[RMDB]
RNA sequence: GGGAACGACUCGAGUAGAGUCGAAAAUGUUGAUAAGACAAGUCCUAGAUAGCCAUUACUUGUUUGUAGAUAAUUAGGCACGGUAAAGUUUACAGUGAAGGUGGUAUAGUUUGAUGGUGAAGCGCCCCCUCUGAGAAACGUUCGCGUUUCUCAGAGGAAAAGAAACAACAACAACAAC
Reactivity to DMS in 0.01 (KOAc 150mM, MgCl2 10mM, bicine 150mM(pH8.5), 24C), signal-to-noise 1, nucleotides 027 to 126: u000g020u000u000g010a170u030a140a110g000a030c020a030a090g000u000c030c030u000a060g010a080u000a110g010c040c020a060u010u000a040c050u010u010g000u000u000u010g020u010a060g000a070u000a070a080u010u010a070g010g000c010a050c070g030g010u010a040a070a080g000u000u000u010a030c060a060g000u010g030a060a080g000g030u000g000g030u010a070u000a040g010u010u010u000g010a080u000g000g020u000g020a080a130g000c100g010c000c020c020